[RMDB]
RNA sequence: GGGAACGACUCGAGUAGAGUCGAAAAUUGGUCUUCGGACCAAAACGCAGCGUACUACCUCGUAACAUCGAUGUUGUCAGCGAAAGGGUCCCAAAUAGGACCCGAUCGCUUGGAUUUACAUCGUGGAGGUAUCGCGGAAUAGCUGAUUCGUCAGCAAACUUGCUGAGAAUUUCGAUUCUCAGCAAGUAAAAGAAACAACAACAACAAC
Reactivity to 2A3 in 0.01 (KOAc 150mM, MgCl2 10mM, bicine 150mM(pH8.5), 24C), signal-to-noise 3, nucleotides 027 to 156: u030u030g000g000u010c020u000u070c300g100g000a040c000c000a030a000a000a000c120g020c090a050g050c000g030u050a100c030u020a010c060c000u030c010g060u090a130a050c060a300u250c030g000a010u000g000u010u000g020u000c000a010g000c000g000a000a030a000g000g000g000u010c030c030c000a120a260a100u300a070g010g010a000c000c030c000g000a000u000c000g000c000u000u040g010g000a010u120u150u180a010c000a000u010c000g010u010g040g020a010g020g000u010a010u260c000g000c020g010g000a020a090u210a070g000c000u000g000a040u060u120c210g090u020c070a000g020c000a110a000
Reactivity to DMS in 0.01 (KOAc 150mM, MgCl2 10mM, bicine 150mM(pH8.5), 24C), signal-to-noise 2, nucleotides 027 to 156: u000u010g010g020u000c010u000u000c300g020g020a020c000c000a000a010a070a090c110g000c080a150g070c000g010u000a090c070u000a010c000c000u000c000g010u010a080a120c060a080u000c010g030a040u010g040u000u000g010u000c030a070g020c010g010a030a060a300g000g010g000u000c000c010c010a040a190a230u010a060g000g010a020c000c000c000g000a050u010c010g020c010u010u000g030g010a040u010u000u000a010c000a010u000c030g020u000g000g020a020g020g010u000a030u010c030g000c000g010g010a110a120u010a090g010c000u000g010a080u000u010c200g000u000c010a020g030c010a130a080
Background:
An RNA of 207 nucleotides, treated with 2A3 and DMS and read out base by base. 2A3 adducts were read by reverse transcription with SuperScript II with manganese. It was measured as part of the RMDB library RNAMAK. The DMS profile rests on 5,438 reads. The reactions ran in a buffer of 150 mM KOAc, 10 mM MgCl2 and 150 mM bicine (pH 8.5), at 24 C.